Notes: This 177-nucleotide RNA was probed chemically with DMS and 2A3. The DMS profile rests on 753 reads. 2A3 adducts were read by reverse transcription with SuperScript II with manganese. It was measured as part of the RMDB library OK2TRN.
RNA sequence: GGGAACGACUCGAGUAGAGUCGAAAAACGGCAGCAGACGUACAGGAGGCGAACAUCAUAAAGAUCCAACUGGCGGUGCUAAAUUCUGGCGGUUCGUUACCUAAACGCUUUUUGGCAUACGGGCCAACCGUCCGAAAAUAUUCGUAUUUUCGGACGGAAAAGAAACAACAACAACAAC
Reactivity to DMS in 0.01 (KOAc 150mM, MgCl2 10mM, bicine 150mM(pH8.5), 24C), signal-to-noise 1, nucleotides 027 to 126: a110c050g000g000c090a090g060c000a040g020a090c080g020u000a040c070a050g010g000a300g030g010c250g010a040a070c100a040u010c080a130u000a100a100a090g020a020u020c020c040a100a230c040u040g010g000c050g010g000u000g010c020u010a050a030a140u020u000c070u020g000g070c070g000g000u000u000c090g030u000u010a040c030c040u000a040a080a090c240g000c130u000u000u000u000u000g010g010c040a070u000a070c110g000g000g000c040c090a060a220
Reactivity to 2A3 in 0.01 (KOAc 150mM, MgCl2 10mM, bicine 150mM(pH8.5), 24C), signal-to-noise 1, nucleotides 027 to 126: a020c010g070g000c000a000g100c030a010g100a260c070g020u160a120c060a030g060g000a020g010g010c030g070a040a070c020a030u220c000a020u170a240a100a040g020a070u040c020c010a010a070c000u010g000g000c030g000g000u020g010c000u050a080a080a040u100u060c050u050g090g020c050g000g000u030u050c020g030u040u050a080c000c000u050a060a090a020c100g060c040u080u090u000u030u100g000g000c020a020u070a240c040g040g060g050c010c010a010a050